[RMDB]
This 177-nucleotide RNA was probed chemically with 2A3 and DMS. Conditions: 150 mM KOAc, 10 mM MgCl2 and 150 mM bicine (pH 8.5), 24 C.

RNA sequence: GGGAACGACUCGAGUAGAGUCGAAAAUAUGAGUUACAAUCACCCAUCCUCUGCGUAAAUGCCCAUUUGACUUCCAGGAUAGCCACGUAACAAGGAAGCUGACAACAGCAAAAAUAACAGUAAUAAGUCUCCCUAUUGAUUUCGAUCAAUAGGGAGAAAAAGAAACAACAACAACAAC
Reactivity to 2A3 in 0.01 (KOAc 150mM, MgCl2 10mM, bicine 150mM(pH8.5), 24C), signal-to-noise 3, nucleotides 027 to 126: u290a080u120g040a050g020u040u090a020c080a030a050u030c050a030c030c000c000a000u040c010c000u020c000u050g030c020g110u100a070a100a060u060g020c000c010c030a050u060u030u040g050a050c000u030u000c020c000a000g080g000a030u100a030g000c010c000a010c030g000u020a050a070c050a090a010g080g020a040a040g000c000u010g010a010c090a220a000c010a050g050c040a000a160a000a020a000u180a040a010c090a030g090u150a040a050u070a250a040g070
Reactivity to DMS in 0.01 (KOAc 150mM, MgCl2 10mM, bicine 150mM(pH8.5), 24C), signal-to-noise 4, nucleotides 027 to 126: u040a060u020g000a100g000u000u010a100c100a090a100u000c070a070c030c040c010a080u010c030c020u000c010u000g010c050g010u020a030a090a080u010g020c030c010c010a090u010u020u010g020a070c070u000u010c040c030a060g020g000a080u020a070g010c010c010a050c050g000u000a050a060c090a080a110g020g020a090a120g000c020u000g000a080c280a060a070c050a040g020c030a010a080a050a080a050u010a040a050c090a050g010u000a040a070u020a060a070g000
2A3 adducts were read by reverse transcription with SuperScript II with manganese.